[RMDB]
RNA sequence: GGGAACGACUCGAGUAGAGUCGAAAAAAAGAGCGCAGCCAUGGUCGGGGGAGAUCAUGUGGUCACUUUCGGGUCGGCAUCGAUUCUGCGAGCAGAAUAUGUGGUUGAUGGCCACUAGGCCGGUACCCACCCUACAAAAUUUCGAUUUUGUAGGGUGAAAAGAAACAACAACAACAAC
Reactivity to 2A3 in 0.01 (KOAc 150mM, MgCl2 10mM, bicine 150mM(pH8.5), 24C), signal-to-noise 9, nucleotides 027 to 126: a000a000a000g090a010g000c050g000c030a030g040c030c010a050u050g030g010u050c030g010g010g010g050g020a160g020a060u060c020a040u100g070u090g060g020u070c030a020c090u060u110u100c050g030g000g020u020c010g020g000c020a050u070c050g060a050u050u010c010u030g030c040g070a060g050c030a010g030a080a040u140a100u210g040u020g030g060u040u080g090a140u110g070g010c010c000a030c030u020a040g040g020c010c000g000g010u040a060c010c000
Reactivity to DMS in 0.01 (KOAc 150mM, MgCl2 10mM, bicine 150mM(pH8.5), 24C), signal-to-noise 8, nucleotides 027 to 126: a060a050a050g010a080g010c050g020c050a090g010c070c030a050u010g000g010u000c040g020g000g010g010g000a100g000a050u020c070a070u020g010u020g010g000u020c050a090c080u000u000u010c070g000g000g010u010c020g010g000c050a070u010c080g010a060u000u000c000u000g000c070g010a140g010c030a030g000a050a030u010a060u010g010u000g000g010u000u010g000a140u020g000g010c000c010a050c100u020a060g010g010c010c010g000g000u010a070c060c040